[RMDB]
About this RNA: Conditions: 150 mM KOAc, 10 mM MgCl2 and 150 mM bicine (pH 8.5), 24 C. An RNA of 177 nucleotides, treated with 2A3 and DMS and read out base by base. For DMS the reverse transcriptase was MarathonRT. The data come from the RNA Mapping Database (RMDB), library OK2TRN.
RNA sequence: GGGAACGACUCGAGUAGAGUCGAAAAAACAGAUGGUCAAUUCAUCACAAUCAACUGGAAAGAAUACAGAAAAAAUCCAAGAAACGAAGAAAUCAAGAAAGUAAUUGAACUAGACCAACAAACUGUGAUCAUAUUCCUAAUUCGUUAGGAAUAUGAUAAAAGAAACAACAACAACAAC
Reactivity to 2A3 in 0.01 (KOAc 150mM, MgCl2 10mM, bicine 150mM(pH8.5), 24C), signal-to-noise 5, nucleotides 027 to 126: a000a010c040a020g030a090u050g000g030u020c010a010a000u030u000c000a020u050c050a010c020a040a060u070c010a020a130c060u050g010g030a100a110a020g070a080a090u170a150c080a050g230a080a120a010a030a010a020u020c020c020a060a030g050a120a070a010c100g030a050a080g070a110a130a020u140c070a080a030g020a090a070a010g020u040a020a100u050u050g000a020a000c040u030a080g010a010c000c000a000a040c040a020a090a010c020u040g030u060g060
Reactivity to DMS in 0.01 (KOAc 150mM, MgCl2 10mM, bicine 150mM(pH8.5), 24C), signal-to-noise 4, nucleotides 027 to 126: a080a020c040a020g020a150u010g000g020u010c030a080a100u000u000c010a030u000c110a040c060a060a240u000c060a110a120c090u000g010g010a050a060a100g010a080a050u010a300c140a090g020a000a030a070a110a150a070u000c020c050a040a090g020a070a090a080c110g010a100a120g000a080a050a020u010c040a030a090g000a060a040a160g010u000a050a070u010u000g020a030a030c050u000a040g000a010c020c000a040a060c090a070a060a120c040u020g000u000g000